[RMDB]
RNA sequence: GGGAACGACUCGAGUAGAGUCGAAAAUAGCUGAUGAAAACCUAGAUGACGAGUCAUAAUUCUCUACAAGGUUCACUUAUUUGAUUAGGUUUCCUAAUACAAACGUUUACCUUGUCUGUUGAUGAUCCCAAGAGUACCCGUUCGCGGGUACUCUUGGAAAAGAAACAACAACAACAAC
Reactivity to 2A3 in 0.01 (KOAc 150mM, MgCl2 10mM, bicine 150mM(pH8.5), 24C), signal-to-noise 1, nucleotides 027 to 126: u180a030g110c120u100g000a080u090g080a110a000a050a000c000c030u040a010g010a150u070g100a020c010g000a000g010u020c030a000u090a170a040u020u000c030u000c000u000a000c000a000a000g000g000u000u040c000a000c000u080u300a130u090u030u000g010a000u000u000a000g000g080u040u230u290c000c000u050a060a000u100a150c010a000a000a000c080g000u080u000u000a010c000c000u000u000g000u000c060u030g020u000u000g020a140u100g020a000u140c000